RNA sequence: GGGAACGACUCGAGUAGAGUCGAAAAUUGGAGCUGGACUGAUUAGAAUUUCUAGCGUUUUAAUCGCUCCAUAACCUUAAGCUAGACGCUUUUAAAAGGUGGUUCGCCUUUUAAACUAAGAAACAAGAACUCUUGAAACUAUCUCAAGGUUUUAGAACCUAAGUAGUGGGUUCGCCCACUACUUAGGAAAAGAAACAACAACAACAAC
Reactivity to 2A3 in 0.01 (KOAc 150mM, MgCl2 10mM, bicine 150mM(pH8.5), 24C), signal-to-noise 1, nucleotides 027 to 156: u050u060g040g000a020g060c070u140g000g130a110c020u020g060a030u000u040a010g000a020a030u160u000u120c000u000a000g000c010g000u010u000u000u000a020a020u020c000g000c000u000c000c000a040u080a070a070c000c000u120u150a020a010g010c000u010a010g000a070c010g000c010u020u000u000u000a000a000a000a000g010g000u010g020g030u020u060c000g000c000c000u000u030u010u000a000a000a020c000u120a150a010g100a240a260a000c090a100a000g000a030a060c030u040c000u140u000g020a060a240a080c100u060a090u170c020u010c070a010a020g000g000u030u050u080u110a040g050a050a030